This 207-nucleotide RNA was probed chemically with 2A3 and DMS. The DMS profile rests on 1,745 reads. Reactivities are rounded to 0.1 and cut off at 0 and 3. For DMS the reverse transcriptase was MarathonRT. DMS (dimethyl sulfate) methylates the pairing face of unpaired adenines and cytosines. Source: RMDB library OK3TST, as collected in RNAgym.

RNA sequence: GGGAACGACUCGAGUAGAGUCGAAAACUGCUUCCAAUGUUGAGAUCCGGCUGAAUCCAACCAAUCAGGGCAAAUUGAGAGUUGUAAAUUUACCACCUGGAUAUGCCAAAUUUAAGAAGAAUUAUGAAACAUUGGGCGAUGAUUUCUCCACGAUUCCGGUGCUUAUAUGUUUCGACAUAUAAGCACCAAAAGAAACAACAACAACAAC
Reactivity to 2A3 in 0.01 (KOAc 150mM, MgCl2 10mM, bicine 150mM(pH8.5), 24C), signal-to-noise 2, nucleotides 027 to 156: c050u090g030c030u130u030c010c000a030a010u010g010u050u090g020a060g010a160u000c040c120g030g020c090u060g000a100a090u020c030c000a040a050c020c010a070a120u140c040a080g090g000g000c050a020a060a080u030u040g030a050g010a010g090u020u060g040u050a130a120a250u110u170u040a030c020c060a040c010c000u000g010g020a030u050a070u120g000c000c060a030a070a110u200u260u110a090a070g030a030a020g050a070a030u060u040a040u300g070a030a020a020c010a000u000u040g000g010g000c020g000a020u080g000a020u000u010u080c100u000c030c030a100c030g020a080u050u050c120c140
Reactivity to DMS in 0.01 (KOAc 150mM, MgCl2 10mM, bicine 150mM(pH8.5), 24C), signal-to-noise 1, nucleotides 027 to 156: c040u000g010c020u010u010c000c010a020a090u010g050u000u000g000a280g020a020u000c040c050g000g040c000u010g030a090a070u000c030c080a100a180c080c050a190a080u010c090a050g040g000g020c070a030a040a110u000u000g010a300g010a130g020u000u000g000u000a090a040a090u030u000u000a100c030c020a140c120c050u020g000g010a090u010a050u010g000c000c030a050a050a040u010u020u000a020a080g000a080a070g020a060a100u010u000a110u010g000a300a050a030c010a070u000u000g010g000g010c090g000a080u000g000a210u000u000u000c030u010c040c040a070c110g020a290u010u010c100c030